[RMDB]
RNA sequence: GGGAACGACUCGAGUAGAGUCGAAAAGAGAGGCGAAGAAAAGAAGGGGAGUCCCCGAUCGAAUGUCCAUAGGCAGAGAAACCUCUGGAGUCCUCUAGACCGCAAGGAGGAAAUUACCAGCAGGGGGAACGACUACCGUUCGCGGUAGUCAAAAGAAACAACAACAACAAC
Reactivity to 2A3 in 0.01 (KOAc 150mM, MgCl2 10mM, bicine 150mM(pH8.5), 24C), signal-to-noise 7, nucleotides 027 to 129: g070a000g000a010g010g020c060g010a050a020g030a040a100a030a020g080a010a020g010g000g010g010a020g040u020c000c000c000c000g000a030u070c030g030a090a040u150g030u050c020c010a080u080a070g040g000c060a010g030a000g040a150a060a040c000c010u010c020u000g000g000a020g030u030c010c000u000c000u030a050g040a130c060c050g030c130a080a070g000g000a010g000g030a020a060a010u120u080a080c010c010a010g020c040a020g020g000g000g000g010a010a030c060
Reactivity to DMS in 0.01 (KOAc 150mM, MgCl2 10mM, bicine 150mM(pH8.5), 24C), signal-to-noise 7, nucleotides 027 to 129: g030a070g020a000g000g000c130g000a010a010g020a030a060a050a030g030a090a070g020g000g030g030a060g000u030c030c000c000c020g000a030u080c090g040a080a060u000g020u000c000c040a060u020a050g010g040c050a020g000a110g040a050a080a090c080c030u050c030u020g010g010a100g040u000c050c040u020c050u000a110g030a090c110c110g000c110a100a140g000g010a020g000g000a020a030a040u030u030a110c080c020a040g030c030a020g030g020g000g010g020a060a000c180

The data come from the RNA Mapping Database (RMDB), library 15KLIB. The record gives the reactivity of an RNA of 170 nucleotides to 2A3 and DMS. The DMS profile rests on 31,110 reads. DMS adducts were read by reverse transcription with MarathonRT. The 2A3 profile rests on 21,600 reads. The reactions ran in a buffer of 150 mM KOAc, 10 mM MgCl2 and 150 mM bicine (pH 8.5), at 24 C.